[RMDB]
RNA sequence: GGGAACGACUCGAGUAGAGUCGAAAACGCGCCCUCGAGGGUAGGGUCGCACUGGUCCACCGCGACGUCGCGCUGUUCUUCCUCUCGGUGCUCAUCGUCGUACUGGGAGUACCCGUGGCGCUGUCGGCUGCCGGGGGUUAUUCGUAACCCCCGGCAGAAAAGAAACAACAACAACAAC
Reactivity to 2A3 in 0.01 (KOAc 150mM, MgCl2 10mM, bicine 150mM(pH8.5), 24C), signal-to-noise 2, nucleotides 027 to 126: c010g020c020g000c020c010c010u020c040g160a300g000g300g010u210a010g010g010g110u200c070g000c050a060c040u160g070g000u060c010c010a060c000c030g020c010g020a000c000g010u130c020g060c000g020c040u070g110u170u040c070u110u080c030c000u000c020u030c020g000g020u010g010c040u040c080a300u150c140g270u050c030g040u040a010c040u040g000g020g020a010g000u050a040c000c010c060g060u060g040g000c060g010c030u090g110u210c020g020g020
Reactivity to DMS in 0.01 (KOAc 150mM, MgCl2 10mM, bicine 150mM(pH8.5), 24C), signal-to-noise 1, nucleotides 027 to 126: c140g000c000g000c030c000c030u010c050g010a180g020g030g000u010a020g000g040g020u000c000g030c060a090c020u000g000g000u010c030c070a150c050c030g020c010g000a010c040g000u000c050g030c030g040c080u000g000u000u000c100u000u010c050c010u000c030u000c000g000g010u000g000c070u010c140a050u000c180g000u010c080g010u010a020c040u000g000g000g020a030g010u000a030c030c300c090g000u000g000g010c000g020c020u000g020u010c050g010g000

Source information:
The data come from the RNA Mapping Database (RMDB), library OK2TST. The record gives the reactivity of an RNA of 177 nucleotides to 2A3 and DMS.